[RMDB]
An RNA of 177 nucleotides, treated with 2A3 and DMS and read out base by base.
For 2A3 the reverse transcriptase was SuperScript II with manganese.
Reactivities are given for positions 27 through 126.
The data come from the RNA Mapping Database (RMDB), libraries RFM100 and RFMREP.
Reactivities are rounded to 0.1 and cut off at 0 and 3.
DMS adducts were read by reverse transcription with MarathonRT.

RNA sequence: GGGAACGACUCGAGUAGAGUCGAAAACAGACAGAACAGUCGGUGGAGCGGUGAAAUGCGUAGAGAUCGACUGGAAUGCCGAUGGCGAAGGCGGUCUGCUGGGGAUCAUCUGACGCUGAGGCACGAAAAGGUACAUGUUGUUCGCAACAUGUACCUUAAAAGAAACAACAACAACAAC
Reactivity to 2A3 in 0.01 (KOAc 150mM, MgCl2 10mM, bicine 150mM(pH8.5), 24C), signal-to-noise 4, nucleotides 027 to 126: c030a020g260a020c030a040g160a130a020c000a010g000u000c010g000g020u000g020g030a030g020c000g120g010u150g080a120a080a030u170g020c060g030u270a020g000a000g010a030u020c010g000a000c000u010g010g020a060a020u040g000c000c010g130a190u300g010g030c030g010a000a010g030g000c020g000g010u010c000u060g100c140u190g060g020g100g000a000u010c010a020u010c020u020g050a090c000g000c010u040g070a040g020g000c000a010c010g090a100a110
Reactivity to DMS in 0.01 (KOAc 150mM, MgCl2 10mM, bicine 150mM(pH8.5), 24C), signal-to-noise 4, nucleotides 027 to 126: c050a170g020a120c170a130g000a120a110c050a010g010u000c000g000g010u020g000g000a100g010c000g010g030u010g020a060a170a130u070g010c020g010u000a110g000a300g000a000u000c010g010a040c000u020g000g010a070a060u000g040c000c020g000a140u040g000g000c000g010a210a070g000g020c300g000g010u010c000u010g000c130u050g000g000g040g000a030u000c000a040u000c010u000g010a190c050g010c020u000g000a210g010g000c000a030c140g000a090a050